The record gives the reactivity of an RNA of 207 nucleotides to 2A3 and DMS. As a SHAPE reagent, 2A3 marks flexible, mostly unpaired nucleotides at the ribose 2'-OH.
[RMDB]
RNA sequence: GGGAACGACUCGAGUAGAGUCGAAAAAGUUCAUGGCUGGAAACAAUCAACAGGUGAAACCCAAGAAAGAUCGUGGUAUGAUUAAGAAGACCUUAACGGCGGCGAUCCCUUUUGCGGUUGUAACUAAAGGGGCUUUUGCUCAAGAGAUGCAACAAGCCACUCAUCCAGUAUUCGUACUGGAUGAGUGAAAAGAAACAACAACAACAAC
Reactivity to 2A3 in 0.01 (KOAc 150mM, MgCl2 10mM, bicine 150mM(pH8.5), 24C), signal-to-noise 3, nucleotides 027 to 156: a000g050u040u030c010a010u070g040g000c020u030g010g020a060a080a090c050a060a170u080c040a020a110c000a050g020g020u030g040a060a010a020c000c000c000a000a040g040a030a040a000g030a010u050c020g000u030g060g030u080a090u270g140a230u060u060a030a030g070a060a030g080a130c030c000u000u030a000a010c010g010g000c010g030g000c010g010a020u020c020c010c000u030u130u010u110g050c050g000g020u010u010g030u040a040a030c010u020a050a040a090g080g040g000g030c000u000u040u050u090g020c020u010c020a030a090g080a010g010a120u110g000c000a000a010c010a110a000g010c000
Reactivity to DMS in 0.01 (KOAc 150mM, MgCl2 10mM, bicine 150mM(pH8.5), 24C), signal-to-noise 1, nucleotides 027 to 156: a120g000u000u000c020a120u000g040g040c070u000g000g020a110a120a150c030a110a070u010c040a070a100c080a060g020g050u000g010a170a080a080c010c000c020a160a050g010a080a070a070g000a010u000c030g140u000g000g030u000a050u010g020a180u000u000a010a130g000a080a150g000a240c080c020u000u000a070a090c040g010g010c020g030g010c070g000a110u020c030c010c010u000u000u000u000g000c100g000g090u000u030g000u010a040a130c020u000a030a090a060g000g040g020g030c060u020u010u000u000g000c020u000c020a080a120g000a220g010a100u000g020c030a010a020c080a070a110g020c040
For DMS, 2,048 sequencing reads were counted. The reactions ran in a buffer of 150 mM KOAc, 10 mM MgCl2 and 150 mM bicine (pH 8.5), at 24 C.